Source information: The record gives the reactivity of an RNA of 177 nucleotides to DMS and 2A3.
[RMDB]
RNA sequence: GGGAACGACUCGAGUAGAGUCGAAAAGCCAUCGCUUUCGAGCGAUGGCAUUGCCCAAAGAGGACCUGGGGGUGUCUGGCCUGCUAAACUCAUCAGCCGUUCUACCGCUAAAUUUCGAUUUAGCGAAAAGUAGUAACGACUUCGGUCGUUACUACUUAAAAGAAACAACAACAACAAC
Reactivity to DMS in 0.01 (KOAc 150mM, MgCl2 10mM, bicine 150mM(pH8.5), 24C), signal-to-noise 1, nucleotides 027 to 126: g010c000c000a010u000c010g010c000u010u000u020c180g000a010g000c010g010a010u000g010g030c000a000u000u000g010c000c000c000a110a100a180g010a110g010g000a070c020c040u000g030g010g010g000g020u000g010u000c020u010g000g020c060c000u020g000c050u000a050a150a080c040u000c020a130u000c010a040g000c020c020g000u000u000c020u000a140c100c040g000c000u000a030a000a010u000u000u020c130g000a020u000u000u000a010g000c000g000a030a050
Reactivity to 2A3 in 0.01 (KOAc 150mM, MgCl2 10mM, bicine 150mM(pH8.5), 24C), signal-to-noise 1, nucleotides 027 to 126: g020c010c000a000u010c000g020c050u120u090u180c300g080a020g000c000g000a000u000g000g000c000a000u000u120g000c000c000c000a030a080a010g110a020g030g010a070c030c030u080g020g000g000g050g010u030g020u060c020u060g020g060c000c000u020g030c040u110a120a060a020c050u080c050a100u010c030a030g000c000c030g000u020u000c080u220a290c050c020g000c010u000a010a010a010u070u100u020c090g060a030u050u010u000a020g010c000g000a120a090
Record summary
Reactivities are given for positions 27 through 126. Source: RMDB library M2PK50, as collected in RNAgym. 2A3 adducts were read by reverse transcription with SuperScript II with manganese.